[RMDB]
Record summary:
Structure probing data (2A3 and DMS) for a 207-nucleotide construct. DMS adducts were read by reverse transcription with MarathonRT. For DMS, 1,476 sequencing reads were counted. The reactions ran in a buffer of 150 mM KOAc, 10 mM MgCl2 and 150 mM bicine (pH 8.5), at 24 C.
RNA sequence: GGGAACGACUCGAGUAGAGUCGAAAAUAAUGGGCUCACGAUUCCACAUGGCUAGGGAGUCCUCACAAUCAUGGUGAAAGGCAGAAGGCACAUCUUACAUGGUGGCAGGCAAGCAGAGAAUGAGAGCCAAGCGAAAGAGGAAACCCCUUAUAAAGCCUAAAGUCUAAGUCUUCGGACUUAGACUUUAAAAAGAAACAACAACAACAAC
Reactivity to 2A3 in 0.01 (KOAc 150mM, MgCl2 10mM, bicine 150mM(pH8.5), 24C), signal-to-noise 1, nucleotides 027 to 156: u180a000a110u040g020g010g000c000u010c060a010c110g190a090u000u000c060c000a010c000a070u090g010g000c030u010a050g000g010g010a100g040u000c030c000u030c000a150c040a030a160u130c020a040u090g020g010u140g070a130a040a010g060g150c010a010g070a120a050g120g040c030a000c040a090u050c040u080u090a120c080a110u070g030g000u040g060g050c010a040g000g000c030a000a060g000c060a000g000a000g050a090a060u170g000a050g000a000g000c010c000a000a000g000c000g110a050a030a050g110a040g020g000a150a060a090c020c030c000c000u060u040a130u080a210a000a060g020c000c020
Reactivity to DMS in 0.01 (KOAc 150mM, MgCl2 10mM, bicine 150mM(pH8.5), 24C), signal-to-noise 1, nucleotides 027 to 156: u000a120a190u020g020g010g040c010u000c000a120c090g040a250u000u000c010c010a110c160a130u000g010g000c050u000a090g010g000g010a070g000u010c000c070u000c010a020c090a100a100u000c070a010u000g050g080u000g000a060a080a160g000g000c030a080g000a080a090g020g030c060a050c060a020u000c010u000u000a040c150a070u000g020g020u000g000g010c010a110g000g000c050a010a070g030c050a100g000a160g030a110a060u010g000a130g000a080g010c010c020a120a050g000c060g000a110a030a230g000a090g070g000a140a030a060c040c000c000c000u000u000a060u000a080a020a140g010c050c010